[RMDB]
RNA sequence: GGGAACGACUCGAGUAGAGUCGAAAAUGUCUGAGCGGCUGUCGCCGCUGACGGACUCGCGGCGAAGAUUGGUCGCUGCAGUGUUAGGUAGAAACGUCUAGGCGCGCGUGAGCGUCUGUCGGCGGUGGGCGGUGGGCUCGUUCGCGAGCCUGCCGCCAAAAGAAACAACAACAACAAC
Reactivity to DMS in 0.01 (KOAc 150mM, MgCl2 10mM, bicine 150mM(pH8.5), 24C), signal-to-noise 1, nucleotides 027 to 126: u040g000u000c020u000g000a020g070c050g000g080c010u010g010u000c070g030c000c000g040c030u000g000a080c010g070g010a100c040u020c120g000c000g040g000c000g010a020a160g000a080u010u010g020g050u040c010g010c010u000g000c000a100g000u000g010u000u010a090g020g020u060a070g030a070a180a150c020g000u000c010u000a060g010g010c010g010c040g010c200g000u010g070a130g000c050g000u010c000u000g000u010c240g000g000c070g020g000u020g010